[RMDB]
RNA sequence: GGGAACGACUCGAGUAGAGUCGAAAAAAUGGGCUACAUUUUCUACAUAAGAAUAUCCACCACACGAAAGUUUUUAUGAAACUAAAAACCAAAGGAGGAUUUAGCAGUAAAUCAAGAAUAGAGUGCUUGAUUGAAUAAGGCCAUGAAGCACGCACACCAUGUUAGAACUGUUCGCAGUUCUAACAUGAAAAGAAACAACAACAACAAC
Reactivity to 2A3 in 0.01 (KOAc 150mM, MgCl2 10mM, bicine 150mM(pH8.5), 24C), signal-to-noise 3, nucleotides 027 to 156: a000a030u110g010g010g000c030u120a050c110a090u050u080u020u110c050u090a130c040a110u210a120a040g030a070a030u050a050u100c040c050a040c050c020a050c020a020c070g090a150a070a070g010u020u010u000u040u120a140u120g060a050a030a000c000u060a070a110a030a020a010c020c000a040a050a010g100g010a010g000g030a000u060u040u010a000g010c000a010g000u050a000a000a010u010c000a000a000g000a050a010u110a110g070a020g040u090g020c000u000u000g010a000u010u000g000a020a030u100a090a020g000g000c000c010a020u100g000a000a000g000c000a000c020g020c000a070c010a010c080
Reactivity to DMS in 0.01 (KOAc 150mM, MgCl2 10mM, bicine 150mM(pH8.5), 24C), signal-to-noise 1, nucleotides 027 to 156: a070a030u000g010g000g010c010u000a060c060a060u010u010u000u000c020u000a110c020a140u000a040a080g010a070a070u010a090u000c010c030a080c030c140a080c300a110c030g000a020a060a160g000u000u000u000u000u000a040u020g010a180a060a080c060u010a060a040a020a000a010c120c000a020a010a060g000g030a070g040g000a110u000u000u000a040g000c050a030g000u000a080a020a020u010c010a010a020g000a090a110u000a220g020a130g030u010g000c010u010u000g010a030u000u000g010a120a110u000a030a020g000g000c010c020a070u000g020a100a080g020c010a010c000g030c090a040c040a080c140
Structure probing data (2A3 and DMS) for a 207-nucleotide construct. The reactions ran in a buffer of 150 mM KOAc, 10 mM MgCl2 and 150 mM bicine (pH 8.5), at 24 C.